[RMDB]
RNA sequence: GGGAACGACUCGAGUAGAGUCGAAAAGGUGAGCCUGAUGUGGCUUAUCAGCGGAUUAUUUCUACCUCUUUGGCCGGGGAUGCUUUGGUGAUCGAUCUCUUAGCCGAGCACGAUUUGGGGCGGAUUGCUACGUUAGGGAAUUCGUUCCCUAACGUAGAAAAGAAACAACAACAACAAC
Reactivity to 2A3 in 0.01 (KOAc 150mM, MgCl2 10mM, bicine 150mM(pH8.5), 24C), signal-to-noise 4, nucleotides 027 to 126: g010g010u020g010a000g000c000c020u120g060a190u180g150u150g030g000c000u010u000a030u030c030a000g050c040g070g020a060u080u040a080u080u270u000c030u050a080c020c010u060c030u100u070u110g040g000c030c000g040g000g000g000a030u030g020c010u040u060u210g040g020u070g030a040u060c040g030a060u010c030u000c000u080u160a010g000c010c000g020a010g000c040a010c060g070a060u040u080u140g010g000g020g020c030g000g050a070u090u100g040
Reactivity to DMS in 0.01 (KOAc 150mM, MgCl2 10mM, bicine 150mM(pH8.5), 24C), signal-to-noise 2, nucleotides 027 to 126: g010g000u000g000a040g010c050c010u000g010a130u010g010u000g030g010c010u010u000a010u000c030a110g020c120g010g000a100u000u000a090u000u000u000c040u010a170c060c040u000c070u000u010u000g010g020c040c050g010g010g010g010a090u000g010c050u000u000u000g030g020u000g010a110u000c080g000a070u000c020u010c030u010u000a300g010c080c050g020a040g000c080a070c080g000a110u000u000u010g010g000g010g020c060g010g000a100u010u010g000

Chemical mapping of a 177-nucleotide RNA with 2A3 and DMS. The 2A3 profile rests on 7,303 reads. Values cover nucleotides 27 to 126. The DMS profile rests on 9,355 reads. For DMS the reverse transcriptase was MarathonRT. It was measured as part of the RMDB library OK2TST.